[RMDB]
RNA sequence: GGGAACGACUCGAGUAGAGUCGAAAAGAUAUGGAGUAGUCGCACGCACGCGAUAAGUGUGCAAACCGUAUCGGAAACGAUACGGGACGUAUACACUUUUGACGCGUGGUGCGACUACUCCUAAGUCGUUGUCUAACGAGUUCGCUCGUUAGACAACAAAAGAAACAACAACAACAAC
Reactivity to DMS in 0.01 (KOAc 150mM, MgCl2 10mM, bicine 150mM(pH8.5), 24C), signal-to-noise 1, nucleotides 027 to 126: g000a150u030a300u000g000g000a000g000u010a020g040u000c000g030c000a000c000g030c020a050c000g030c000g050a070u000a040a000g000u000g020u010g020c150a140a300a220c000c000g010u000a000u000c020g000g020a100a100a180c020g020a000u000a000c020g000g010g070a000c300g000u010a150u000a090c010a020c020u000u020u000u040g000a210c070g000c030g050u000g030g030u020g000c000g000a000c000u000a000c000u000c000c000u000a000a060g000u000c040
About this RNA: Chemical mapping of a 177-nucleotide RNA with DMS. For DMS, 812 sequencing reads were counted. It was measured as part of the RMDB library TTRINS. The reactions ran in a buffer of 150 mM KOAc, 10 mM MgCl2 and 150 mM bicine (pH 8.5), at 24 C. Reactivities are given for positions 27 through 126.